[RMDB]
RNA sequence: GGGAACGACUCGAGUAGAGUCGAAAAUGACCCGUCUGAUGUGCUGCCGUGGGCACUUGACUGAGAGUGGCAGAGCACUAGGCUAACCCAAAGUGACACAUGCCUGGCGGGAUGUUCAGUCUCUGUAGACGUGAUGAUCUUUCGAGAUCAUCACGUCAAAAGAAACAACAACAACAAC
Reactivity to 2A3 in 0.01 (KOAc 150mM, MgCl2 10mM, bicine 150mM(pH8.5), 24C), signal-to-noise 2, nucleotides 027 to 126: u080g110a040c000c000c000g000u020c000u060g150a110u120g000u000g020c000u030g050c010c000g230u090g050g010g000c030a030c000u100u020g170a160c010u120g080a090g020a000g130u130g010g080c060a010g000a050g300c000a000c050u030a010g000g000c010u020a230a280c000c010c010a150a050a010g100u120g070a040c000a030c030a110u130g030c000c010u000g000g000c000g000g000g000a050u170g070u010u060c060a000g000u020c000u040c000u080g050u060a040
Reactivity to DMS in 0.01 (KOAc 150mM, MgCl2 10mM, bicine 150mM(pH8.5), 24C), signal-to-noise 2, nucleotides 027 to 126: u000g020a200c080c000c080g040u000c010u000g000a100u000g030u000g000c020u000g080c110c110g030u030g020g010g040c020a080c010u010u000g000a090c190u000g000a160g000a100g000u020g000g010c020a160g000a060g030c020a030c030u000a060g000g030c010u000a080a190c060c000c080a120a130a200g010u000g000a060c060a100c070a090u010g000c080c020u000g000g000c030g000g010g010a110u030g000u000u000c100a260g000u000c030u010c040u110g000u010a300